[RMDB]
RNA sequence: GGGAACGACUCGAGUAGAGUCGAAAAAGCCGGGCGUAGUCGUCGCCCUGCGACACAACCUCGACCUAGUCCUGGUCGACGUAACCUACACCGACGGUGCAACGGAGCGUUACCAGGUGCUCGUCGGCAGAUCCGAGUAGUUCGCUACUCGGAUCUGAAAAGAAACAACAACAACAAC
Reactivity to DMS in 0.01 (KOAc 150mM, MgCl2 10mM, bicine 150mM(pH8.5), 24C), signal-to-noise 3, nucleotides 027 to 126: a110g000c000c090g010g000g000c010g020u010a050g010u010c060g020u000c020g000c010c000c030u000g040c020g000a190c190a210c300a090a070c060c040u000c000g010a000c030c070u000a060g010u030c040c040u000g000g000u000c040g000a000c070g000u000a020a130c020c000u010a090c080a120c030c040g010a090c130g030g000u040g010c010a040a040c090g000g020a300g020c060g000u030u020a090c030c030a120g000g040u000g000c040u000c300g010u000c010g000g020
Reactivity to 2A3 in 0.01 (KOAc 150mM, MgCl2 10mM, bicine 150mM(pH8.5), 24C), signal-to-noise 5, nucleotides 027 to 126: a020g030c040c020g000g000g010c010g010u080a070g150u150c080g050u070c000g020c020c000c000u000g000c000g040a020c000a010c000a130a080c010c030u020c000g010a010c010c030u050a060g150u120c020c070u020g000g000u020c040g010a000c010g010u040a040a080c000c020u030a030c020a020c040c010g140a100c100g020g010u090g010c030a070a040c080g020g010a050g080c040g020u060u060a080c010c000a050g080g000u020g010c020u010c010g010u000c020g000g020